[RMDB]
Annotation: This 177-nucleotide RNA was probed chemically with 2A3 and DMS. The reactions ran in a buffer of 150 mM KOAc, 10 mM MgCl2 and 150 mM bicine (pH 8.5), at 24 C. As a SHAPE reagent, 2A3 marks flexible, mostly unpaired nucleotides at the ribose 2'-OH.
RNA sequence: GGGAACGACUCGAGUAGAGUCGAAAAGAUAUGGAACACACCAAGAACGAAGAACGCUCUCGGAAACGAGAGCGGGAGUUUGGUGUUGUUCCUAAGUCAAACGUUCUGUCCUUCGGGACAGAACGAAGUCCGAUAAGAUGUUCGCAUCUUAUCGGACAAAAGAAACAACAACAACAAC
Reactivity to 2A3 in 0.01 (KOAc 150mM, MgCl2 10mM, bicine 150mM(pH8.5), 24C), signal-to-noise 1, nucleotides 027 to 126: g000a000u020a020u060g010g000a000a000c000a010c000a000c020c010a050a110g290a300a060c120g080a280a050g000a000a020c010g020c020u000c000u000c000g000g000a000a010a010c000g010a000g000a000g010c000g030g000g000a010g030u120u200u120g000g000u000g000u090u080g000u010u010c000c000u000a010a000g010u000c030a150a020a070c020g000u000u030c010u000g010u000c010c020u020u160c300g160g020g000a000c020a000g000a010a000c000g000a020a020
Reactivity to DMS in 0.01 (KOAc 150mM, MgCl2 10mM, bicine 150mM(pH8.5), 24C), signal-to-noise 2, nucleotides 027 to 126: g000a010u000a020u010g000g010a000a030c000a020c010a000c040c000a120a300g000a070a090c120g010a160a180g000a300a300c000g000c010u000c000u000c000g010g000a000a010a020c000g010a020g010a030g000c010g000g000g000a050g040u000u000u010g010g020u010g010u000u010g000u020u010c000c000u010a000a090g000u000c000a100a070a300c060g010u000u010c010u000g000u000c000c000u000u000c270g040g000g010a000c000a000g000a020a020c010g000a010a080